[RMDB]
RNA sequence: GGGAACGACUCGAGUAGAGUCGAAAAGAUAUGGAACACCGAGAAACAGCUUGUCAGAGCAUUCGGAAACGAAGCUCUUGGAUUUAGCUGGAGGUGUUCCUAAGUCAAAGCAUGCUUCGGCAUGCAACAUACUGUAUGACUUCGGUCAUACAGUAUGAAAAGAAACAACAACAACAAC
Reactivity to DMS in 0.01 (KOAc 150mM, MgCl2 10mM, bicine 150mM(pH8.5), 24C), signal-to-noise 9, nucleotides 027 to 126: g000a040u000a300u010g000g010a010a000c010a000c010c000g020a230g010a170a140a240c020a010g010c000u010u000g000u000c010a020g000a010g010c000a170u000u000c000g000g000a060a060a130c000g010a010a030g000c000u000c000u000u010g030g010a040u000u000u000a020g010c010u000g010g010a100g010g010u000g000u000u000c000c000u000a000a070g000u000c030a110a100a150g000c000a010u000g000c000u000u010c180g020g010c000a000u000g010c000a050a080
Reactivity to 2A3 in 0.01 (KOAc 150mM, MgCl2 10mM, bicine 150mM(pH8.5), 24C), signal-to-noise 9, nucleotides 027 to 126: g010a010u040a020u100g000g000a000a000c000a000c010c020g040a080g300a210a280a030c010a000g010c020u120u160g050u050c010a000g000a000g020c080a300u030u010c010g000g030a040a030a020c010g000a010a000g000c000u000c010u050u160g090g000a040u210u240u300a010g000c000u010g000g010a070g000g000u000g000u010u000c000c000u000a010a000g000u010c030a030a110a030g000c000a000u000g010c000u070u090c240g140g000c000a000u010g000c010a000a000